[RMDB]
RNA sequence: GGGAACGACUCGAGUAGAGUCGAAAAGCAAAAUAAGCGAGCAAAGGAGAAAGCCGCAAGAAAGAAUAAAGAAAGAGCGGCAAGAGGAGAAGCUCGCAAAAACCACCAGAAAAAUAACGAUGGAUUCGUCCGUCGAAAAGAAACAACAACAACAAC
Reactivity to 2A3 in 0.01 (KOAc 150mM, MgCl2 10mM, bicine 150mM(pH8.5), 24C), signal-to-noise 7, nucleotides 027 to 135: g040c010a040a030a030a160u130a130a020g000c000g010a000g000c020a050a060a080g080g020a070g040a040a050a010g000c000c000g000c040a010a010g050a060a100a010g080a070a110u300a150a110a020g140a060a080a010g140a010g010c000g000g010c010a030a020g050a020g100g050a110g020a140a030g030c020u040c040g030c030a020a010a000a000a010c010c020a010c010c010a020g160a040a060a010a000a000u120a050a010c010g000a010u010g000g000a010u010u020c060g040u010c010c000g000u000c010g030a040
Reactivity to DMS in 0.01 (KOAc 150mM, MgCl2 10mM, bicine 150mM(pH8.5), 24C), signal-to-noise 5, nucleotides 027 to 135: g000c150a070a050a100a050u010a070a140g000c010g010a020g000c000a030a100a130g000g010a040g000a120a100a070g010c000c000g000c000a060a070g010a080a080a120g010a110a160u030a070a100a080g020a110a120a110g010a140g020c020g010g000c020a050a090g000a160g000g010a170g010a110a140g000c010u010c010g040c020a010a020a030a040a030c060c040a070c070c050a080g000a010a040a040a040a050u030a060a080c040g000a020u000g000g010a020u010u020c110g010u010c030c050g020u020c030g000a060
Chemical mapping of a 155-nucleotide RNA with 2A3 and DMS. Source: RMDB library P90LIB, as collected in RNAgym. The RNA was probed in 150 mM KOAc, 10 mM MgCl2 and 150 mM bicine (pH 8.5) at 24 C. Reactivities are given for positions 27 through 135.